[RMDB]
RNA sequence: GGGAACGACUCGAGUAGAGUCGAAAACACAUUAUGCCGCAUAAUCAUGGUCGGCACAUCAUCGCUGUCAUGUGACCAUGUGAAACAUCCAAUCCCGGCGCAGCCAAAACAAAUGGCUCUAAUCCAUAAUUGUCUGGCCGCUGGUCAAGUGGGACUAGUACGUAUUAGUCUUCGGACUAAUACGUACAAAAGAAACAACAACAACAAC
Reactivity to DMS in 0.01 (KOAc 150mM, MgCl2 10mM, bicine 150mM(pH8.5), 24C), signal-to-noise 2, nucleotides 027 to 156: c050a120c030a110u010u000a010u000g020c050c000g040c300a160u000a100a180u020c030a050u010g000g040u000c010g050g040c010a040c080a110u010c190a140u010c110g000c040u020g020u020c080a150u000g020u010g000a080c000c020a020u010g010u000g000a170a100a080c060a100u010c010c030a050a110u000c000c030c000g050g010c040g020c040a100g000c020c020a020a040a040a110c050a020a080a070u000g000g000c150u010c170u030a130a080u000c020c010a000u000a070a150u000u000g020u000c090u000g030g000c000c000g020c000u010g020g030u010c060a020a080g040u000g010g010g010a050c040u010a140
Reactivity to 2A3 in 0.01 (KOAc 150mM, MgCl2 10mM, bicine 150mM(pH8.5), 24C), signal-to-noise 5, nucleotides 027 to 156: c050a000c010a040u110u140a100u280g050c060c050g100c080a100u120a140a060u150c010a010u040g000g000u050c040g010g040c040a000c010a050u180c030a040u140c060g090c170u050g030u040c010a120u150g150u170g120a000c000c000a010u000g030u030g070a060a070a010c040a030u040c020c030a040a040u040c000c010c000g010g000c030g010c040a020g020c010c010a000a050a020a090c020a000a080a040u010g010g000c010u020c050u230a100a080u060c010c010a030u040a160a110u160u030g010u000c030u020g000g000c000c010g000c020u020g000g050u050c070a150a000g030u080g030g030g040a020c020u050a040

Background
The data come from the RNA Mapping Database (RMDB), library OK3TST. Structure probing data (DMS and 2A3) for a 207-nucleotide construct. The reactions ran in a buffer of 150 mM KOAc, 10 mM MgCl2 and 150 mM bicine (pH 8.5), at 24 C.